An RNA of 207 nucleotides, treated with 2A3 and read out base by base. The RNA was probed in 150 mM KOAc, 10 mM MgCl2 and 150 mM bicine (pH 8.5) at 24 C. The 2A3 profile rests on 747 reads.
[RMDB]
RNA sequence: GGGAACGACUCGAGUAGAGUCGAAAAAUCUUUAAGCAGAUGGCAGGUUCACCCCGUACGGUGCGGAAGUUCGCGCUUCCGUGAAACGCGAAAAUCGGACGGUGGCUGAAAGUCGCAUCGCAAAACCUAUAGCUUGUUAGGUUCGCCUAACAAGCAACUGUCACAAUACCUUCGGGUAUUGUGACAGAAAAGAAACAACAACAACAAC
Reactivity to 2A3 in 0.01 (KOAc 150mM, MgCl2 10mM, bicine 150mM(pH8.5), 24C), signal-to-noise 1, nucleotides 027 to 156: a000u120c000u000u100u070a110a000g010c050a050g000a020u030g030g060c080a100g070g000u020u010c000a000c010c000c030c000g000u000a000c000g000g000u050g010c040g000g000a000a000g010u170u210c070g040c030g010c130u000u000c000c000g000u040g050a050a040a020c210g020c040g040a060a050a000a090u050c000g000g010a000c000g000g150u230g060g000c130u030g000a000a000a000g130u120c080g000c050a000u000c000g000c020a010a000a000a090c060c060u120a130u170a120g000c010u000u000g000u020u010a000g000g010u030u080c170g020c040c000u000a010a000c000a000a000g000c000a000a000
Overview
Reactivities are given for positions 27 through 156. The data come from the RNA Mapping Database (RMDB), library M2RFPK.